[RMDB]
RNA sequence: GGGAACGACUCGAGUAGAGUCGAAAACACGAAAGCAUCGUUGUAAAUACAUGAUUUUAGGUGUAUGAUUAGGGUGUAUAUUAAAUGGUUUUGAAAAGAGGUGCUUUUUAGUCAUGAAAGUAGCAUACCAUACCUAAAGCUUCGGCUUUAGGUAUGGAAAAGAAACAACAACAACAAC
Reactivity to DMS in 0.01 (KOAc 150mM, MgCl2 10mM, bicine 150mM(pH8.5), 24C), signal-to-noise 6, nucleotides 027 to 126: c060a140c180g000a120a100a120g000c010a020u010c050g030u010u000g010u010a050a080a030u010a020c020a030u000g000a110u020u020u030u020a070g020g010u010g000u000a020u000g000a100u020u020a050g010g000g020u000g010u000a050u020a090u020u020a050a100a100u030g010g000u000u010u020u020g000a070a030a070a080g010a150g020g000u000g000c020u000u000u010u000u010a070g010u050c200a090u030g000a030a030a060g020u000a030g000c050a070u020a140
Reactivity to 2A3 in 0.01 (KOAc 150mM, MgCl2 10mM, bicine 150mM(pH8.5), 24C), signal-to-noise 5, nucleotides 027 to 126: c090a010c000g050a020a020a000g030c000a010u000c020g140u090u120g060u140a040a100a010u060a030c020a010u020g100a190u110u090u130u230a160g140g000u030g010u020a010u060g100a110u100u150a070g080g010g000u060g050u030a060u010a030u120u240a070a100a090u120g070g060u050u070u110u140g170a070a050a020a030g140a030g000g070u010g000c000u020u000u000u020u070a060g020u070c070a090u250g070a020a010a010g110u100a010g050c000a010u020a050